RNA sequence: GGGAACGACUCGAGUAGAGUCGAAAAAAAACCAACAGAACGUCGGGUGAAACUUUGUCAUCUUUAUGUCUAACCCACCUUGAGACAUUAGCUGGGUGACUUUACAUAGUGUCCACAACUUAUUCAAAUUCCGGAUAUGAUUCGUCAUAUCCGGAAUAAAAGAAACAACAACAACAAC
Reactivity to DMS in 0.01 (KOAc 150mM, MgCl2 10mM, bicine 150mM(pH8.5), 24C), signal-to-noise 3, nucleotides 027 to 126: a070a030a070a080c030c020a140a120c130a080g010a060a060c080g020u000c060g010g010g010u010g010a060a070a050c060u020u010u000g010u000c010a040u000c050u000u000u000a030u000g000u000c040u020a070a120c050c010c030a050c170c050u010u000g000a130g000a100c080a040u000u000a050g010c120u000g000g010g010u000g010a020c050u000u010u000a060c080a060u000a040g000u000g000u000c030c010a050c090a050a030c060u000u000a070u010u000c060a040a110
Reactivity to 2A3 in 0.01 (KOAc 150mM, MgCl2 10mM, bicine 150mM(pH8.5), 24C), signal-to-noise 2, nucleotides 027 to 126: a000a020a000a010c050c020a060a030c030a070g060a070a020c030g040u030c060g140g000g020u040g060a110a040a040c010u100u070u110g030u020c020a010u010c040u060u170u040a050u080g000u000c000u020a070a070c010c000c030a010c010c020u070u080g080a030g020a030c000a050u110u100a020g010c060u070g030g000g040u010g010a010c000u060u060u030a030c000a080u080a030g030u010g020u060c010c000a050c000a090a070c080u140u120a110u170u150c050a120a090